[RMDB]
RNA sequence: GGGAACGACUCGAGUAGAGUCGAAAAAAGGAUUUGGCUUGGAACUUUCAAAUCCGCUCAUGAAGCCGCUGCUGCUUACGAUAGCGCAUCGAUUAAGCUUCGAAGCUUUGAUGCUAACUCGCACCGGAAGGUAGUGUAGGUUCGCCUACACUACCUUAAAAGAAACAACAACAACAAC
Reactivity to DMS in 0.01 (KOAc 150mM, MgCl2 10mM, bicine 150mM(pH8.5), 24C), signal-to-noise 5, nucleotides 027 to 126: a110a080g010g000a020u000u000u000g010g000c300u000u000g010g020a100a110c160u000u000u000c030a030a030a040u010c020c010g010c060u000c080a130u010g010a060a060g030c020c010g020c140u000g000c010u010g030c030u010u000a090c220g010a080u000a040g030c070g000c040a030u000c010g020a130u010u000a080a110g010c000u000u010c120g000a150a090g020c020u000u010u020g010a040u000g010c010u010a080a070c120u000c080g020c100a070c070c030g000g020
Reactivity to 2A3 in 0.01 (KOAc 150mM, MgCl2 10mM, bicine 150mM(pH8.5), 24C), signal-to-noise 3, nucleotides 027 to 126: a000a000g020g010a000u030u040u030g030g010c060u090u150g170g100a190a130c040u040u160u040c040a010a010a030u000c010c010g020c000u040c010a070u170g030a080a030g030c020c010g050c060u030g000c020u030g000c000u050u070a090c110g100a100u090a040g030c000g000c010a010u030c010g090a060u100u200a040a010g010c000u110u120c110g100a070a020g000c020u070u090u120g040a040u060g000c010u000a040a090c020u010c050g000c010a030c020c010g070g090